[RMDB]
RNA sequence: GGGAACGACUCGAGUAGAGUCGAAAAGCGUGCUUACCCGUGCCGGUAAUCCACAUGUGGCCCGCCUGCUGGGCGCUUACCAGUUUGGGCGGCCCAAUCGUUCGCCAACCGAUGCUCUGGCGUACGCCUGCUGAUUCCCAUUCGUGGGAAUCAGCAGAAAAGAAACAACAACAACAAC
Reactivity to 2A3 in 0.01 (KOAc 150mM, MgCl2 10mM, bicine 150mM(pH8.5), 24C), signal-to-noise 5, nucleotides 027 to 126: g010c020g010u040g000c020u080u160a140c000c000c000g030u030g030c030c010g060g000u080a100a090u080c050c010a060c020a110u150g080u200g040g020c110c080c000g010c020c000u020g000c010u000g050g030g000c100g030c070u050u060a110c000c000a030g000u040u150u300g080g000g000c000g020g000c000c000c000a010a030u050c000g040u070u020c030g030c070c020a060a070c020c020g050a050u130g030c000u000c010u040g010g000c020g020u020a030c020g030c020
Reactivity to DMS in 0.01 (KOAc 150mM, MgCl2 10mM, bicine 150mM(pH8.5), 24C), signal-to-noise 2, nucleotides 027 to 126: g000c020g010u000g030c020u000u000a060c020c000c030g000u000g050c000c000g000g030u010a110a030u010c070c060a110c300a110u020g000u010g000g000c100c030c000g010c000c000u040g020c030u000g000g000g010c290g000c240u020u010a170c000c030a010g020u000u050u010g000g030g050c000g000g000c020c030c070a060a160u030c020g000u000u000c000g000c010c010a010a110c140c120g060a130u020g020c130u010c040u040g010g000c040g000u000a020c070g000c190
Source: RMDB library OK1LIB, as collected in RNAgym. The record gives the reactivity of an RNA of 177 nucleotides to 2A3 and DMS. The reactions ran in a buffer of 150 mM KOAc, 10 mM MgCl2 and 150 mM bicine (pH 8.5), at 24 C. Reactivities are given for positions 27 through 126.